The record gives the reactivity of an RNA of 177 nucleotides to DMS and 2A3. For 2A3, 19,779 sequencing reads were counted. For DMS, 22,096 sequencing reads were counted. DMS (dimethyl sulfate) methylates the pairing face of unpaired adenines and cytosines.
RNA sequence: GGGAACGACUCGAGUAGAGUCGAAAAUUAGCAACACCACAUAAUGGUUCACAAGCAGCUGAUAAGUUUGGAAAUACAGAAGCUGUUAGAAAAAUCAUGUUCGCUUUAAAUCGAUUUAUGGGUAACAACAAUAAACACAAUUCGUUGUGUUUAUUGUAAAAGAAACAACAACAACAAC
Reactivity to DMS in 0.01 (KOAc 150mM, MgCl2 10mM, bicine 150mM(pH8.5), 24C), signal-to-noise 9, nucleotides 027 to 126: u010u020a060g030c080a080a070c080a120c040c040a080c110a070u020a110a040u010g010g010u010u010c050a300c150a090a090g000c010a020g000c000u000g000a200u040a080a100g020u000u030u020g020g030a070a110a090u020a040c050a060g000a180a040g010c010u000g000u000u010a090g000a020a070a060a030a010u000c010a000u010g010u000u000c080g020c050u000u010u020a060a080a080u030c040g000a040u020u020u010a030u010g000g000g000u010a080a060c190a070
Reactivity to 2A3 in 0.01 (KOAc 150mM, MgCl2 10mM, bicine 150mM(pH8.5), 24C), signal-to-noise 9, nucleotides 027 to 126: u080u050a020g030c030a020a070c020a040c060c010a090c020a060u120a080a030u080g040g000u040u040c050a040c020a090a030g010c000a000g000c010u010g040a090u090a280a100g040u020u090u150g170g060a080a120a040u230a100c010a020g120a080a010g020c020u010g030u070u030a020g070a010a050a010a000a000u040c030a030u130g060u080u090c070g000c000u030u060u120a050a110a060u100c040g130a200u020u070u050a030u090g010g010g040u050a060a050c060a020